[RMDB]
RNA sequence: GGGAACGACUCGAGUAGAGUCGAAAAGGCUGCGCUGAUCGACAGCGAAAUCGACGUUCUGCGUCGCCAGGCUGCACAGCGUUUCGGUGGCAACGAAAAACAAGCUCUGGAACUGCCGCGCGAACUGCACGACUGAGUCAUUCGUGACUCAGUCGUGAAAAGAAACAACAACAACAAC
Reactivity to DMS in 0.01 (KOAc 150mM, MgCl2 10mM, bicine 150mM(pH8.5), 24C), signal-to-noise 2, nucleotides 027 to 126: g010g010c080u010g020c010g010c000u000g000a090u000c050g030a300c000a020g020c020g010a050a150a080u000c000g010a030c010g000u000u010c180u000g010c030g010u000c060g000c050c050a140g020g000c000u000g000c030a300c010a080g020c060g010u000u000u000c050g020g030u000g000g000c030a030a100c100g000a050a070a030a120a090c140a130a130g010c010u020c060u000g000g000a100a080c070u010g010c000c020g010c050g000c040g010a040a060c140u010g010
Reactivity to 2A3 in 0.01 (KOAc 150mM, MgCl2 10mM, bicine 150mM(pH8.5), 24C), signal-to-noise 2, nucleotides 027 to 126: g040g000c010u020g000c020g000c020u030g040a160u150c090g120a110c030a020g020c010g000a030a030a030u050c010g000a000c020g020u130u050c100u300g000c020g030u020c020g000c030c010a100g050g030c010u010g010c010a020c000a050g000c000g010u000u020u070c070g010g010u080g040g000c010a060a050c090g150a120a060a050a000a030c040a100a000g020c040u030c030u140g040g010a050a040c050u050g030c000c000g000c000g000c010g040a040a040c000u070g000